[RMDB]
RNA sequence: GGGAACGACUCGAGUAGAGUCGAAAAGGAGGACUACGCACAGCGGCUGGCCACAAGACACCUGCUGCGGUAUCCGGGCCUGCAGCAUGCAGCCAGUUACGGCGCACCCGUGCUAGCGAUUUGUGCACAGUGGCAUACUAUUCGUAGUAUGCCACUGAAAAGAAACAACAACAACAAC
Reactivity to 2A3 in 0.01 (KOAc 150mM, MgCl2 10mM, bicine 150mM(pH8.5), 24C), signal-to-noise 2, nucleotides 027 to 126: g070g020a040g020g020a030c050u080a030c130g000c020a000c000a050g030c020g080g020c010u010g000g010c030c000a070c050a070a040g110a040c030a040c080c020u030g000c010u010g010c010g000g000u030a060u090c040c000g020g070g020c010c030u100g020c010a010g000c010a010u120g020c010a000g000c000c000a020g020u100u150a050c070g000g030c050g000c040a080c010c020c010g010u070g000c010u020a040g010c010g110a120u110u090u140g040u040g000c030a000
Reactivity to DMS in 0.01 (KOAc 150mM, MgCl2 10mM, bicine 150mM(pH8.5), 24C), signal-to-noise 5, nucleotides 027 to 126: g020g010a110g010g000a120c080u000a070c160g000c020a050c040a090g020c070g000g010c030u000g010g000c050c090a140c160a070a100g000a090c140a110c120c060u000g000c020u010g020c020g000g010u000a070u010c050c060g010g000g010c140c000u010g020c020a010g010c040a030u000g010c090a110g010c000c000a090g010u000u010a050c090g010g010c070g020c100a110c110c030c030g010u010g000c030u010a060g010c030g000a140u010u000u000g010u000g010c060a240